[RMDB]
RNA sequence: GGGAACGACUCGAGUAGAGUCGAAAAAGAGUAUCAUCGUACCUGCCACACGAUAUACGAAUGCCAAAAUGCCAAACUUGCAAAGAAAGCUAUCAGUUAAUAACUGUGGAAGUGCACAUAAGAACAAACUGACUAAAUGCUUCGGCAUUUAGUCAGUAAAAGAAACAACAACAACAAC
Reactivity to DMS in 0.01 (KOAc 150mM, MgCl2 10mM, bicine 150mM(pH8.5), 24C), signal-to-noise 1, nucleotides 027 to 126: a040g000a300g030u000a000u000c110a030u000c010g000u000a000c050c020u000g000c120c050a210c100a030c010g000a090u000a050u000a070c030g000a210a090u000g000c000c010a020a070a140a110u010g030c010c030a010a040a060c040u000u000g050c050a010a000a040g000a070a040a030g000c020u000a080u030c000a030g000u000u000a100a110u000a190a070c080u000g000u000g000g040a010a130g010u000g000c070a010c110a040u010a000a060g020a050a070c220a070a090
Reactivity to 2A3 in 0.01 (KOAc 150mM, MgCl2 10mM, bicine 150mM(pH8.5), 24C), signal-to-noise 1, nucleotides 027 to 126: a000g080a000g020u010a010u050c040a000u010c050g030u010a080c010c010u040g020c100c000a060c030a000c100g010a010u000a000u000a100c020g040a050a010u150g000c010c010a110a000a000a170u120g010c000c010a080a060a100c040u050u060g000c000a000a130a110g060a120a040a050g020c040u050a100u300c030a040g050u030u030a190a040u090a020a170c000u030g000u060g110g000a120a080g010u040g000c000a020c010a040u090a090a050g100a100a080c030a060a060
Annotation: Chemical mapping of a 177-nucleotide RNA with DMS and 2A3. Conditions: 150 mM KOAc, 10 mM MgCl2 and 150 mM bicine (pH 8.5), 24 C. For 2A3, 625 sequencing reads were counted. Source: RMDB library OK2TST, as collected in RNAgym. Values cover nucleotides 27 to 126. For DMS, 610 sequencing reads were counted.